[RMDB]
RNA sequence: GGGAACGACUCGAGUAGAGUCGAAAAGAUAUGGACACCGUAGUUCAUACUACGAAGAACUCGGAAACGAGGGAGUAGAUGAGGUUCGAAGGUGUCCUAAGUCAAAAGUGUUGCUUCGGCAACACAACUCUAUUGUAAUGUUCGCAUUACAAUAGAGAAAAGAAACAACAACAACAAC
Reactivity to DMS in 0.01 (KOAc 150mM, MgCl2 10mM, bicine 150mM(pH8.5), 24C), signal-to-noise 9, nucleotides 027 to 126: g010a050u000a300u010g000g010a010c010a020c010c000g010u000a280g000u000u000c010a030u000a110c000u000a010c010g000a090a150g010a120a170c000u000c000g000g000a100a090a160c010g000a010g000g000g000a080g020u000a010g000a050u010g000a020g010g010u000u000c040g010a150a300g000g010u000g010u000c000c000u000a020a080g000u010c050a080a070a080a090g000u000g010u000u000g010c000u000u010c210g030g010c000a000a000c000a000c000a040a120
Reactivity to 2A3 in 0.01 (KOAc 150mM, MgCl2 10mM, bicine 150mM(pH8.5), 24C), signal-to-noise 9, nucleotides 027 to 126: g010a020u060a030u130g000g000a000c000a000c010c020g050u080a020g040u010u010c030a030u100a300c000u010a010c020g250a300a080g020a060a020c000u000c010g020g040a070a050a030c020g000a010g010g010g010a020g000u010a000g000a070u050g060a040g110g230u140u120c060g100a160a040g000g000u000g000u000c000c000u000a000a000g010u000c020a010a020a060a130g000u000g000u010u000g000c000u030u090c280g130g000c000a000a000c000a000c000a010a020